[RMDB]
RNA sequence: GGGAACGACUCGAGUAGAGUCGAAAAUUUGUGCUGUGUUGUAGUCGGAGCAUAAUGGGGUCCAAGGCGGAUCGGGGUAAUGGAUACCGACAUCAGCGCGCACCACUUAGUCCGCCUGGAGGGUCUACCUCUGUGGUAGGUUCGCCUACCACAGAGGAAAAGAAACAACAACAACAAC
Reactivity to DMS in 0.01 (KOAc 150mM, MgCl2 10mM, bicine 150mM(pH8.5), 24C), signal-to-noise 2, nucleotides 027 to 126: u030u000u010g040u000g000c020u030g030u010g020u000u040g000u000a120g020u060c040g070g010a240g010c090a010u000a070a040u040g000g000g000g000u000c060c040a070a140g060g020c070g000g000a060u000c130g000g010g050g000u000a120a030u060g000g000a140u010a130c060c060g000a170c060a110u020c040a100g010c000g050c060g040c190a060c010c070a020c080u000u020a060g060u000c070c010g000c040c090u000g000g010a090g000g000g040u000c050u000a060
Reactivity to 2A3 in 0.01 (KOAc 150mM, MgCl2 10mM, bicine 150mM(pH8.5), 24C), signal-to-noise 3, nucleotides 027 to 126: u110u090u090g030u020g030c060u070g050u020g010u090u060g050u060a090g000u040c020g010g010a010g040c020a020u090a140a090u210g040g000g000g000u050c000c000a050a040g200g020c020g000g000a000u040c020g030g050g040g000u050a070a010u050g020g060a050u080a120c020c010g080a060c010a120u070c020a030g010c000g000c000g000c000a010c020c000a040c000u020u070a020g020u010c000c000g000c000c030u030g000g030a040g030g040g000u000c010u030a080
This 177-nucleotide RNA was probed chemically with DMS and 2A3.
For 2A3 the reverse transcriptase was SuperScript II with manganese.
Source: RMDB library OK1LIB, as collected in RNAgym.
Values are in units of 0.01, from 0 to 300, in steps of 10.
Values cover nucleotides 27 to 126.
For DMS, 2,116 sequencing reads were counted.
High DMS reactivity at an A or C suggests that its Watson-Crick edge is free.
The RNA was probed in 150 mM KOAc, 10 mM MgCl2 and 150 mM bicine (pH 8.5) at 24 C.